[RMDB]
RNA sequence: GGGAACGACUCGAGUAGAGUCGAAAAAAGGGUAAUUUGAUUGAAAAGACGAUGUGGGAAACCUUUGACGCCUUGACGAGUAUUACGGAACAAUACUCGGCUAGUUCCGUGACGGUCAAUCAGUUCAUGCCUGUGCAAGAUUCGUCUUGCACAGGCAAAAAGAAACAACAACAACAAC
Reactivity to DMS in 0.01 (KOAc 150mM, MgCl2 10mM, bicine 150mM(pH8.5), 24C), signal-to-noise 1, nucleotides 027 to 126: a040a080g030g000g010u030a010a140u010u010u000g000a100u000u000g000a070a070a120a140g060a110c110g040a080u010g000u000g000g010g000a100a060a060c050c020u020u010u010g010a110c080g000c130c000u010u020g000a020c040g040a070g000u000a040u000u000a050c100g010g010a040a100c130a040a020u000a040c010u000c040g000g040c020u000a110g010u000u000c160c040g020u010g060a010c100g000g000u010c010a010a040u010c030a040g000u030u000c150a050